[RMDB]
RNA sequence: GGGAACGACUCGAGUAGAGUCGAAAAGGAGGAGUGCGCGUUAAUGUGAUGGAAGUAGAAGUUUCGCCGGCGCACAGAGCAUUCGUGCUGAUGUUUGUAAAAGCGACCGCAGUAGUCGCAGCGCUGCACGCUCUGUAUCUCUUCAAUGAGAUGUACCCACAGAGGAGGUAUUCGUACCUCCUCUGUGAAAAGAAACAACAACAACAAC
Reactivity to DMS in 0.01 (KOAc 150mM, MgCl2 10mM, bicine 150mM(pH8.5), 24C), signal-to-noise 2, nucleotides 027 to 156: g000g000a090g030g010a080g040u000g040c040g000c050g020u010u020a070a080u010g010u000g030a050u000g030g010a090a190g050u010a110g010a110a300g000u000u000u000c030g040c030c090g000g030c080g040c070a060c030a040g020a070g000c020a120u000u010c160g030u000g030c020u010g010a110u000g010u000u000u000g020u010a080a090a130a200g000c000g010a030c020c030g040c110a220g000u010a110g030u000c020g030c010a100g010c050g020c030u010g000c050a030c030g000c010u010c000u010g000u000a050u000c010u000c000u000u000c190a150a050u000g000a030g000a050u010g000u000a090c030c010
Reactivity to 2A3 in 0.01 (KOAc 150mM, MgCl2 10mM, bicine 150mM(pH8.5), 24C), signal-to-noise 4, nucleotides 027 to 156: g030g020a020g020g010a120g020u050g010c010g000c010g010u010u160a230a150u170g040u090g030a080u110g060g060a080a070g010u120a060g040a250a030g020u050u090u060c060g030c110c030g010g010c040g000c030a020c010a020g030a000g000c030a060u120u130c080g020u030g030c050u030g030a300u050g160u030u160u110g160u130a070a110a060a020g000c000g040a060c040c030g070c190a090g050u300a010g000u040c010g000c010a010g020c010g010c020u080g000c000a010c010g010c010u000c000u010g030u000a030u020c000u000c000u080u110c140a160a260u140g000a010g000a010u040g020u050a050c010c000

An RNA of 207 nucleotides, treated with DMS and 2A3 and read out base by base. The reactions ran in a buffer of 150 mM KOAc, 10 mM MgCl2 and 150 mM bicine (pH 8.5), at 24 C. Reactivities are given for positions 27 through 156. High 2A3 reactivity points to a flexible backbone, as in loops and unpaired stretches. For DMS, 4,486 sequencing reads were counted. DMS (dimethyl sulfate) methylates the pairing face of unpaired adenines and cytosines.